[RMDB]
RNA sequence: GGGAACGACUCGAGUAGAGUCGAAAAGAAGCACUAAGCGAAUUACCACGACUUCGUGUGCUCAACUUGGAAUUCACCAGAGCUACGACGCGUGACGGUGGAUACUAUAUCAGCAGAUGCAAAUACCUGCCAAUACGCAUUUCGAUGCGUAUUGGCAAAAAGAAACAACAACAACAAC
Reactivity to 2A3 in 0.01 (KOAc 150mM, MgCl2 10mM, bicine 150mM(pH8.5), 24C), signal-to-noise 2, nucleotides 027 to 126: g100a030a020g030c000a000c000u010a010a110g020c000g050a120a070u130u110a110c010c000a030c080g150a150c040u030u010c000g050u030g020u050g080c010u000c030a000a050c020u050u130g110g000a060a020u110u240c020a040c030c020a040g030a020g020c000u050a060c090g190a030c020g020c010g040u080g040a050c020g020g000u000g010g050a020u020a130c100u130a060u060a040u190c050a000g020c000a000g040a090u070g020c000a010a140a000u110a110c000c010
Reactivity to DMS in 0.01 (KOAc 150mM, MgCl2 10mM, bicine 150mM(pH8.5), 24C), signal-to-noise 2, nucleotides 027 to 126: g020a170a090g000c000a060c220u000a050a070g040c000g000a270a000u000u050a000c050c140a120c060g000a050c050u000u000c000g000u000g000u000g000c000u000c050a030a010c170u010u160g000g000a180a120u000u000c050a020c030c000a030g000a210g010c030u000a000c000g000a050c190g000c120g020u000g040a240c060g000g000u000g000g000a040u200a050c070u000a190u000a150u000c300a140g000c030a250g000a120u090g040c000a040a000a140u000a010c070c040
Structure probing data (2A3 and DMS) for a 177-nucleotide construct. It was measured as part of the RMDB library OK1LIB. The reactions ran in a buffer of 150 mM KOAc, 10 mM MgCl2 and 150 mM bicine (pH 8.5), at 24 C. DMS adducts were read by reverse transcription with MarathonRT. For DMS, 1,165 sequencing reads were counted.